[RMDB]
RNA sequence: GGGAACGACUCGAGUAGAGUCGAAAAUAAUAGCUGGACACUUUAGUACAUACUUGGUAGGGAGUAAUCAUAAAUUAACAAUACCCAUUAGCAUUUUAAUCGGAAUGAUCCUACUUCUUGUUGCAGAUACAAUAGGACGAGUCUAUCUGGUUGGCAACAGCCAUAAAUUAUUCGUAAUUUAUGGCUGAAAAGAAACAACAACAACAAC
Reactivity to 2A3 in 0.01 (KOAc 150mM, MgCl2 10mM, bicine 150mM(pH8.5), 24C), signal-to-noise 4, nucleotides 027 to 156: u110a010a050u050a040g020c030u030g040g030a020c020a010c090u070u110u110a050g030u070a050c040a090u120a040c070u030u070g030g010u030a010g020g010g000a050g040u090a080a030u040c050a060u100a090a170a060u140u120a120a010c010a020a060u110a130c000c030c000a030u080u080a020g020c020a040u000u040u060u270a060a030u140c030g010g030a050a060u080g020a030u030c010c010u000a030c000u020u050c020u050u050g020u020u010g010c030a010g010a120u030a080c030a030a050u050a060g010g030a010c040g010a000g030u000c010u010a060u030c020u050g030g000u010u020g060g000c050a060a000
Reactivity to DMS in 0.01 (KOAc 150mM, MgCl2 10mM, bicine 150mM(pH8.5), 24C), signal-to-noise 3, nucleotides 027 to 156: u000a080a110u010a070g010c020u000g020g010a110c050a080c020u000u010u000a090g010u010a070c050a060u010a090c060u000u010g000g040u000a070g010g000g000a120g010u000a040a070u010c050a060u000a090a050a090u000u000a050a080c120a040a060u000a060c010c010c120a210u000u010a070g020c030a040u010u000u010u000a030a080u000c040g030g010a130a100u000g000a050u000c030c010u010a040c040u010u000c020u000u010g040u000u000g000c000a080g010a160u000a060c030a050a060u000a100g010g020a060c050g000a090g030u000c030u000a110u000c020u000g010g020u000u010g000g020c030a060a200